[RMDB]
Conditions: 150 mM KOAc, 10 mM MgCl2 and 150 mM bicine (pH 8.5), 24 C. This 177-nucleotide RNA was probed chemically with 2A3 and DMS. It was measured as part of the RMDB library M2PK90. DMS adducts were read by reverse transcription with MarathonRT.
RNA sequence: GGGAACGACUCGAGUAGAGUCGAAAAGAACUCACCAGCAAAUGUUUACGACAAGAUUCGACAAUUGCAAAUUACGUAGCGAUCUUCCAGAAUCUUGUCGAAACGUUCCCAAUCGCUACGCCCUAAAGCGUAAAUAGCAAUUCGUUGCUAUUUACGCAAAAGAAACAACAACAACAAC
Reactivity to 2A3 in 0.01 (KOAc 150mM, MgCl2 10mM, bicine 150mM(pH8.5), 24C), signal-to-noise 2, nucleotides 027 to 126: g030a060a020c020u000c020a060c050c000a030g110c110a060a120a120u210g060u120u210u180a080c030g000a000c000a000a000g020a020u020u010c020g040a020c130a190a260u240u300g100c010a030a210a060u250u130a070c030g000u000a000g020c000g020a000u030c030u180u070c160c050a030g030a010a000u000c000u000u000g000u000c000g020a000a000a000c030g000u000u000c000c000c000a020a010u020c180g000c000u020a010c000g030c000c000c000u120a120a040a000
Reactivity to DMS in 0.01 (KOAc 150mM, MgCl2 10mM, bicine 150mM(pH8.5), 24C), signal-to-noise 3, nucleotides 027 to 126: g010a100a100c050u000c070a100c130c080a090g030c080a080a100a090u000g030u010u010u020a240c030g020a040c010a010a000g010a020u000u000c000g000a140c280a110a070u000u010g000c110a080a030a050u000u020a090c030g000u000a020g010c010g000a020u000c110u000u000c180c180a070g000a010a000u000c000u000u000g000u000c000g000a020a040a090c050g020u000u000c000c010c000a080a040u000c000g020c020u000a000c030g000c050c040c000u010a010a070a080